The record gives the reactivity of an RNA of 207 nucleotides to DMS.
RNA sequence: GGGAACGACUCGAGUAGAGUCGAAAAUUUGCUUAAUUCUUAUGGUCACAAGAUGGCUGCCCCACUGAAUUGUAAAGAGGAAGAAAAAGAAUGUGUUCCCUUGUUUUUUAUUUACAAGGGAAGAAAACUCUCACUAGACAUUUUCUAGAUUCACUGAAGUGCAUUUUAUAUUCGUAUAAAAUGCACUAAAAGAAACAACAACAACAAC
Reactivity to DMS in 0.01 (KOAc 150mM, MgCl2 10mM, bicine 150mM(pH8.5), 24C), signal-to-noise 1, nucleotides 027 to 156: u010u000u040g020c040u010u010a150a090u010u000c030u000u020a170u000g000g060u020c070a080c040a120a120g020a300u000g000g000c000u010g010c040c010c000c030a220c090u010g030a080a050u000u020g010u000a120a000a050g000a080g000g010a060a070g000a080a090a050a020a020g020a130a070u000g020u010g010u020u000c000c030c000u000u010g000u000u010u000u000u030u010a230u010u030u000a020c000a020a000g000g010g000a000a020g000a070a060a070a070c050u030c010u000c030a160c030u000a030g020a060c120a130u000u000u000u000c000u000a040g000a050u000u020c020a020c040u010g020a100
The DMS profile rests on 1,354 reads. Source: RMDB library OK3TST, as collected in RNAgym. For DMS the reverse transcriptase was MarathonRT.